[RMDB]
RNA sequence: GGGAACGACUCGAGUAGAGUCGAAAAUGAACGCUUUCGAAGGAAAGCUUGACCAGCUAAUCUUCUGCAACGCCAUUACGAGGACUGCCCUUAGAGGCUCAUGGCGAUAUGUCACCCCGCCGGUCGGUUAAGAAUCAGCGAUUCGUCGCUGAUUCAAGGUCAUGAAGUAGUUCGCUACUUCAUGACCAAAAGAAACAACAACAACAAC
Reactivity to 2A3 in 0.01 (KOAc 150mM, MgCl2 10mM, bicine 150mM(pH8.5), 24C), signal-to-noise 3, nucleotides 027 to 156: u140g020a060a040c060g070c060u040u100u130c060g070a060a080g060g000a220a030a000g010c030u040u060g020a020c000c000a000g030c000u060a110a070u020c030u050u040c050u090g010c060a090a030c020g000c000c020a030u090u100a040c100g020a030g060g100a070c070u100g000c000c000c000u080u140a050g030a090g100g040c020u000c050a030u020g000g000c000g000a030u040a130u160g050u070c010a040c010c010c000c020g010c010c030g000g060u020c080g040g030u100u150a140a030g000a000a010u000c000a000g000c000g010a010u030u050c120g020u030c000g100c000u000g000a000u010u000c000a000a000
Reactivity to DMS in 0.01 (KOAc 150mM, MgCl2 10mM, bicine 150mM(pH8.5), 24C), signal-to-noise 1, nucleotides 027 to 156: u010g000a090a060c140g010c030u000u000u000c050g000a290a020g030g030a050a110a050g010c000u010u000g000a040c060c030a210g050c040u010a030a100u000c030u010u000c030u000g030c040a050a100c000g020c000c030a050u000u000a050c080g010a090g000g050a140c070u000g030c010c020c010u000u000a160g010a180g050g080c060u000c050a050u010g050g030c030g010a080u010a010u000g000u000c060a100c050c000c010c040g010c050c060g030g020u010c030g030g030u000u010a070a230g010a010a020u030c000a010g000c020g010a030u000u020c300g030u010c000g000c010u000g010a050u000u010c010a040a140